[RMDB]
Chemical mapping of a 177-nucleotide RNA with DMS and 2A3. Reactivities are given for positions 27 through 126. Conditions: 150 mM KOAc, 10 mM MgCl2 and 150 mM bicine (pH 8.5), 24 C.

RNA sequence: GGGAACGACUCGAGUAGAGUCGAAAAGCGCUUCCGAGAGGGACAUCUCCUGGGCAGGGAGUGACAUAGGCCACGCCAUGUGGGCCUCCCAGCCAUGUGCUGGUGCUGUGUGGGCUGGGAGGGCAGGGCGGGUCACUAAAUUCGUUUAGUGACCCGCAAAAGAAACAACAACAACAAC
Reactivity to DMS in 0.01 (KOAc 150mM, MgCl2 10mM, bicine 150mM(pH8.5), 24C), signal-to-noise 2, nucleotides 027 to 126: g010c070g010c080u000u000c040c020g000a250g000a150g020g000g010a070c140a070u010c070u010c020c010u000g030g030g000c110a110g010g010g000a040g000u000g000a050c070a100u010a100g030g000c010c030a030c060g000c090c080a060u010g010u000g010g020g000c010c000u000c000c000c000a010g010c010c010a060u010g020u000g020c030u000g020g000u010g030c030u020g030u010g030u000g010g010g010c010u000g020g000g010a020g020g000g010c040a040g010g010
Reactivity to 2A3 in 0.01 (KOAc 150mM, MgCl2 10mM, bicine 150mM(pH8.5), 24C), signal-to-noise 2, nucleotides 027 to 126: g030c030g000c030u030u040c030c020g030a060g030a010g080g060g020a050c040a210u040c110u010c030c040u010g000g030g140c040a030g030g000g010a040g020u030g030a010c010a080u150a080g050g060c050c010a020c020g010c080c050a150u200g030u040g030g030g050c030c010u000c020c000c000a010g010c020c000a110u120g040u020g030c030u160g050g190u180g090c060u030g030u050g010u080g050g040g020c000u020g000g000g000a020g000g010g000c040a010g020g080